Source: RMDB library RFM100, as collected in RNAgym. Chemical mapping of a 177-nucleotide RNA with 2A3. 2A3 adducts were read by reverse transcription with SuperScript II with manganese. Conditions: 150 mM KOAc, 10 mM MgCl2 and 150 mM bicine (pH 8.5), 24 C. Values cover nucleotides 27 to 126. The 2A3 profile rests on 580 reads.

RNA sequence: GGGAACGACUCGAGUAGAGUCGAAAAGGACUCAUACUCCGUUGGGUUGUAGCUCAUUUGGGUAGAGCACUCGUUUUUGGAACGAAUGGUAGCCGGUUCAAAUCCGGUCAACUCAUCCUUGAAAGAUGUGAAAGGGGCUAUUCGUAGCCCCUUUCACAAAAGAAACAACAACAACAAC
Reactivity to 2A3 in 0.01 (KOAc 150mM, MgCl2 10mM, bicine 150mM(pH8.5), 24C), signal-to-noise 1, nucleotides 027 to 126: g140g000a000c000u000c030a140u010a040c030u030c050c010g050u000u130g000g000g000u000u000g040u040a110g000c000u000c040a070u000u120u140g220g010g100u250a020g020a000g020c000a000c000u000c000g010u000u000u000u070u200g230g020a020a000c020g000a030a000u060g020g020u140a040g020c000c020g000g020u010u020c000a000a000a000u000c000c000g030g020u040c010a020a020c000u000c000a000u000c030c010u010u000g060a080a070a050g080a050u060